[RMDB]
RNA sequence: GGGAACGACUCGAGUAGAGUCGAAAAAUUGCGGAAGACCGCAACGCCUGGCUGAGGGAUCUGAUAGAGAUGGCGUACAUGAUCGUGACCGACCACAAUAUGAACUGCGAGCAGCGGCUCAGCGCCAUUUGCACGACGGUAGUCGAGCUGAGCAUGAUCCGUACCCUUUAUUCGUAAAGGGUACGGAAAAAGAAACAACAACAACAAC
Reactivity to 2A3 in 0.01 (KOAc 150mM, MgCl2 10mM, bicine 150mM(pH8.5), 24C), signal-to-noise 3, nucleotides 027 to 156: a000u070u010g000c020g020g040a130a070g130a300c000c030g000c010a010a010c040g010c000c020u020g020g040c020u020g040a100g000g050g000a040u030c040u090g040a080u090a080g060a020g020a040u040g000g000c000g030u040a050c050a070u160g050a100u090c050g040u040g040a030c040c030g060a070c000c030a040c050a110a100u160a050u160g090a080a030c050u080g010c030g030a050g020c020a020g060c030g020g010c010u000c010a020g010c000g040c020c000a070u120u050u140g050c070a040c090g060a020c030g080g080u140a060g000u030c000g010a030g000c020u000g010a010g010c030a030u070g050a020
Reactivity to DMS in 0.01 (KOAc 150mM, MgCl2 10mM, bicine 150mM(pH8.5), 24C), signal-to-noise 1, nucleotides 027 to 156: a070u030u000g000c000g000g010a110a140g000a270c000c030g050c050a080a060c050g000c050c000u020g010g040c030u000g040a060g000g060g010a050u000c010u000g030a190u010a070g000a130g010a060u000g000g010c060g010u000a080c050a030u000g000a050u010c040g020u000g000a180c030c000g020a080c010c000a070c030a090a090u000a100u010g000a070a080c040u000g000c070g000a140g020c020a120g000c030g090g010c000u000c000a070g010c000g010c020c030a080u020u000u000g000c100a080c000g040a060c030g030g030u010a030g020u000c020g010a050g020c010u010g030a070g000c020a110u000g020a170
The record gives the reactivity of an RNA of 207 nucleotides to 2A3 and DMS.
Values cover nucleotides 27 to 156.
Source: RMDB library OK3TST, as collected in RNAgym.
The RNA was probed in 150 mM KOAc, 10 mM MgCl2 and 150 mM bicine (pH 8.5) at 24 C.
For DMS, 2,407 sequencing reads were counted.